Overview:
Source: RMDB library TTRINS, as collected in RNAgym. The record gives the reactivity of an RNA of 177 nucleotides to DMS. For DMS the reverse transcriptase was MarathonRT.
RNA sequence: GGGAACGACUCGAGUAGAGUCGAAAAGAUAUGGACCGGAGAAAGGAAAAUCCUAAGACAUGCUGCUCAUUCGGAAACGAAUGUCCAGCAACAGCUUAGGAUUUUCCUUUCUCCCGGUCCUAAGUCAUCAAACAAUCUCGUUCGCGAGAUUGUUUGAAAAAGAAACAACAACAACAAC
Reactivity to DMS in 0.01 (KOAc 150mM, MgCl2 10mM, bicine 150mM(pH8.5), 24C), signal-to-noise 1, nucleotides 027 to 126: g020a050u000a300u000g000g020a010c020c020g000g000a050g000a030a000a010g000g010a040a010a010a010u010c000c000u010a000a050g040a130c080a210u000g050c000u020g030c070u020c000a010u000u010c020g020g010a160a070a260c020g000a040a000u010g010u000c190c000a010g030c000a010a050c300a140g030c010u000u000a010g000g000a010u010u000u010u000c010c000u010u000u000c010u000c060c110c010g000g000u000c000c000u000a010a040g000u000c000a210